[RMDB]
RNA sequence: GGGAACGACUCGAGUAGAGUCGAAAAUCAGGAAGAUGUCAGAAGAUUGUAUUGCUAAGAUACCAACAAUGGACAGUAGUGUCACCACACGCACCACAGUAGGAGGAGGAAUUAUUGACCCCAUGCACUGAACUAGUUAGUUCGCUAACUAGUUCAGAAAAGAAACAACAACAACAAC
Reactivity to DMS in 0.01 (KOAc 150mM, MgCl2 10mM, bicine 150mM(pH8.5), 24C), signal-to-noise 9, nucleotides 027 to 126: u020c050a080g000g000a080a060g010a080u010g010u010c030a080g010a110a080g000a090u020u010g020u010a050u010u010g010c080u040a070a110g000a060u000a070c060c060a050a070c120a080a070u040g000g010a040c040a050g030u010a050g010u020g010u000c040a080c090c050a060c050a070c110g000c040a030c020c020a030c050a060g010u030a060g010g000a060g000g010a070g010g000a060a050u020u020a080u010u020g010a100c050c010c000c030a090u030g010c170a170
Reactivity to 2A3 in 0.01 (KOAc 150mM, MgCl2 10mM, bicine 150mM(pH8.5), 24C), signal-to-noise 9, nucleotides 027 to 126: u100c020a020g090g030a040a060g060a050u090g040u060c040a020g040a170a030g030a170u070u110g030u070a060u040u070g040c040u070a100a040g010a080u070a060c020c030a030a050c060a080a130u110g040g010a020c020a040g080u170a030g040u030g040u100c030a020c070c010a010c000a010c040g020c010a030c010c010a030c030a030g070u100a040g020g060a020g010g040a030g020g040a070a040u140u060a080u070u180g080a110c000c000c000c000a030u080g010c030a030